An RNA of 207 nucleotides, treated with 2A3 and read out base by base. 2A3 adducts were read by reverse transcription with SuperScript II with manganese. The reactions ran in a buffer of 150 mM KOAc, 10 mM MgCl2 and 150 mM bicine (pH 8.5), at 24 C. Reactivities are given for positions 27 through 156.
[RMDB]
RNA sequence: GGGAACGACUCGAGUAGAGUCGAAAAUCAUCAAGAAGUAGGCUUAGGCCAAUUGCUUGGUGGUGAAAGUAGAGGGAAGGUAGCACUUCGACGCCUCUAAGUACGCUGUGGGAGUAGCGCUUAAAUCAAAAGCACAGCGACUUCGGUCGCUGUGCAAUCACUGCUAGCUGUUCGCAGCUAGCAGUGAAAAAGAAACAACAACAACAAC
Reactivity to 2A3 in 0.01 (KOAc 150mM, MgCl2 10mM, bicine 150mM(pH8.5), 24C), signal-to-noise 1, nucleotides 027 to 156: u020c000a000u000c000a000a000g000a090a030g040u110a010g030g020c010u070u090a040g150g000c020c010a060a110u020u050g050c000u000u000g000g000u000g000g000u010g050a130a060a000g080u110a010g010a050g020g080g030a100a010g060g030u100a010g020c020a030c080u030u010c020g080a040c010g060c020c000u000c010u000a110a000g040u030a020c070g000c060u030g000u040g080g030g000a030g050u030a010g000c010g020c060u080u150a000a110a090u100c040a010a190a000a000g010c000a000c000a000g000c000g000a000c000u050u100c210g080g000u010c000g030c000u000g000u000g000c010a000a000